[RMDB]
RNA sequence: GGGAACGACUCGAGUAGAGUCGAAAACGCCAAGCACGAGUCGCAGACGCUAAAGUUUACGCUACGUCAGGACGGAUGUGACAGGGCGAAAGCAAGCCAAUGCUUUAGGCGAACGUACGAGAAGCGAUAUUUUAUAUAUAUUCGUAUAUAUAAAAUAAAAAGAAACAACAACAACAAC
Reactivity to DMS in 0.01 (KOAc 150mM, MgCl2 10mM, bicine 150mM(pH8.5), 24C), signal-to-noise 4, nucleotides 027 to 126: c070g010c010c020a080a150g020c050a030c010g010a300g000u010c010g040c070a050g010a090c060g010c060u020a080a140a210g000u010u030u040a070c160g020c040u010a100c030g000u000c020a100g020g000a060c030g020g000a100u020g020u000g010a120c060a110g000g000g000c010g000a030a060a030g020c060a050a090g000c070c220a170a130u000g000c000u000u000u010a060g010g000c020g010a130a070c030g000u010a050c030g010a090g010a120a110g000c020g000a220
Reactivity to 2A3 in 0.01 (KOAc 150mM, MgCl2 10mM, bicine 150mM(pH8.5), 24C), signal-to-noise 3, nucleotides 027 to 126: c000g000c000c000a030a030g030c010a020c040g080a050g020u020c000g000c090a020g020a030c010g000c060u120a080a160a030g030u040u110u170a090c070g020c030u030a010c020g040u030c030a010g010g050a060c020g020g050a070u100g030u040g030a030c030a060g060g030g050c000g000a060a000a000g060c020a010a010g000c010c000a020a030u010g000c000u000u020u060a060g000g010c000g030a060a030c030g040u080a030c050g060a010g010a180a010g040c020g010a000